Description:
An RNA of 177 nucleotides, treated with DMS and 2A3 and read out base by base. For DMS the reverse transcriptase was MarathonRT.
[RMDB]
RNA sequence: GGGAACGACUCGAGUAGAGUCGAAAAGAUAUGGAGCCAUCGUGAACUACACGGUAGUGUCGGAAACGACAUUUCCGUGCACGAGUGGCUCCUAAGUCAAACUUCUGGACGUUCGCGUCCAGAAGAACACUUGGUUAGGGUUCGCCCUAACCAAGUGAAAAGAAACAACAACAACAAC
Reactivity to DMS in 0.01 (KOAc 150mM, MgCl2 10mM, bicine 150mM(pH8.5), 24C), signal-to-noise 3, nucleotides 027 to 126: g000a050u000a300u000g000g010a020g030c000c000a060u000c000g010u000g020a130a050c080u020a300c010a010c000g000g030u000a020g030u000g020u000c000g020g000a110a050a300c010g020a020c000a030u000u000u000c010c000g020u010g000c030a000c000g000a020g030u000g010g000c010u010c000c000u010a000a060g010u000c040a110a160a250c000u000u000c000u000g010g000a020c010g020u000u020c300g020c010g020u000c000c000a010g000a000a000g020a130a200
Reactivity to 2A3 in 0.01 (KOAc 150mM, MgCl2 10mM, bicine 150mM(pH8.5), 24C), signal-to-noise 3, nucleotides 027 to 126: g050a010u090a040u210g000g000a000g000c000c000a010u010c010g000u000g040a090a090c100u190a060c300a000c020g040g010u030a020g020u020g010u000c020g030g020a040a070a040c000g000a010c010a010u010u020u030c010c010g030u030g010c030a000c020g030a050g100u060g020g000c000u000c000c000u000a010a000g010u010c010a010a040a100c000u000u000c010u010g010g010a020c010g020u040u070c300g020c020g150u000c030c000a000g000a010a000g000a020a000